RNA sequence: GGGAACGACUCGAGUAGAGUCGAAAAUAGAACGUGUGGAUUGGGAUAUAGAGUAUCCUUAUAUCUCACAUGAAAAGAAAUUGAAUUCCUGUUGUAGAAUCGUUGAGCGCAACGUCGUACGUGCUGCCUAGUCGUGACUUCGGUCACGACAAAAGAAACAACAACAACAAC
Reactivity to 2A3 in 0.01 (KOAc 150mM, MgCl2 10mM, bicine 150mM(pH8.5), 24C), signal-to-noise 2, nucleotides 027 to 129: u210a050g150a160a100c000g000u000g000u000g020g040a000u000u000g000g020g000a020u020a000u030a130g300a030g180u120a000u050c000c000u020u120a110u000a000u000c180u030c040a000c000a000u010g000a020a010a020a020g030a000a170a000u080u150g150a040a040u050u000c000c000u010g000u130u120g010u070a000g040a020a110u070c140g000u050u000g020a040g130c010g010c000a000a210c110g050u070c000g000u120a000c070g000u020g000c000u000g000c020c000u080a020
Reactivity to DMS in 0.01 (KOAc 150mM, MgCl2 10mM, bicine 150mM(pH8.5), 24C), signal-to-noise 2, nucleotides 027 to 129: u020a130g070a100a140c100g030u000g010u070g000g050a000u000u000g010g010g010a000u020a070u060a140g120a140g000u040a050u030c030c000u060u000a120u010a140u000c070u040c010a000c000a000u060g010a060a030a060a060g000a060a130a140u040u040g030a130a170u000u040c020c020u060g010u020u050g030u000a100g030a120a140u020c090g000u020u020g020a140g000c100g060c010a040a120c000g000u000c080g040u010a100c010g030u000g040c000u030g010c000c060u030a030